An RNA of 177 nucleotides, treated with DMS and 2A3 and read out base by base.
For 2A3 the reverse transcriptase was SuperScript II with manganese.
RNA sequence: GGGAACGACUCGAGUAGAGUCGAAAACUCACAGCUGAAAUUGCGUGCAGGAGGAAUCCUGAGAUAGGUCUGCAGAACCGAAACUGGUAUGGUAAGUUUGCGGACAUUCUGAGCAUCAGUUAGGCCGUCAAGCUUAGUAUUUCGAUACUAAGCUUGAAAAAGAAACAACAACAACAAC
Reactivity to DMS in 0.01 (KOAc 150mM, MgCl2 10mM, bicine 150mM(pH8.5), 24C), signal-to-noise 9, nucleotides 027 to 126: c020u000c020a150c130a090g000c010u000g000a050a090a080u040u010g000c060g030u000g010c000a040g000g010a020g000g080a150a100u000c010c000u000g000a060g000a060u010a080g010g010u000c000u010g020c020a030g020a030a040c030c030g010a070a120a080c080u010g000g020u020a090u030g010g010u010a130a110g000u000u010u000g000c010g000g000a040c020a080u010u000c010u000g010a110g000c020a060u000c030a010g010u000u010a170g010g010c050c100g000
Reactivity to 2A3 in 0.01 (KOAc 150mM, MgCl2 10mM, bicine 150mM(pH8.5), 24C), signal-to-noise 9, nucleotides 027 to 126: c010u010c000a050c020a030g010c020u040g030a040a110a130u190u080g010c010g030u050g010c020a010g000g040a010g040g120a070a120u030c000c000u010g000a010g020a030u120a040g110g020u000c010u010g000c010a030g050a140a030c020c010g030a090a080a040c060u120g120g100u290a170u180g070g030u040a070a060g040u020u030u040g030c010g000g000a010c010a040u070u010c010u050g110a020g030c000a020u030c000a010g020u040u080a050g060g030c040c020g060